RNA sequence: GGGAACGACUCGAGUAGAGUCGAAAAGAUAUGGACGUACGAACUCGUUGAAAUCACUUCGGAAACGAAGUGAGUGGAGAGUGUACGUCCUAAGUCAAACACACAUGCACUUCGGUGCAUGUGUGAAGUAAAAAGCGUUGUUCGCAACGCUUUUUACAAAAGAAACAACAACAACAAC
Reactivity to DMS in 0.01 (KOAc 150mM, MgCl2 10mM, bicine 150mM(pH8.5), 24C), signal-to-noise 2, nucleotides 027 to 126: g000a020u010a010u000g010g010a010c000g030u000a010c000g010a060a120c000u000c010g000u000u020g000a140a110a050u010c000a010c010u000u000c000g010g000a000a000a010c000g010a020a010g000u000g000a010g020u020g010g000a020g010a020g020u000g000u000a010c000g010u000c000c000u000a000a040g000u000c010a150a170a300c000a000c000a000c000a000u000g010c000a010c000u000u000c190g030g010u010g000c000a000u000g010u000g000u010g000a020a060
Reactivity to 2A3 in 0.01 (KOAc 150mM, MgCl2 10mM, bicine 150mM(pH8.5), 24C), signal-to-noise 2, nucleotides 027 to 126: g000a000u010a000u030g000g000a010c010g000u000a010c030g060a300a240c010u010c010g210u230u030g000a000a010a010u010c000a010c000u000u000c000g000g010a020a000a000c000g000a010a010g010u010g010a010g000u100g010g020a020g000a000g010u040g010u000a000c000g000u000c000c000u010a000a010g000u000c000a000a110a000c000a000c000a000c000a000u010g000c010a000c010u060u090c300g170g000u020g000c000a000u000g000u000g000u000g000a000a000
The data come from the RNA Mapping Database (RMDB), library TTRDEL. Structure probing data (DMS and 2A3) for a 177-nucleotide construct. 2A3 adducts were read by reverse transcription with SuperScript II with manganese. Values cover nucleotides 27 to 126. For DMS the reverse transcriptase was MarathonRT.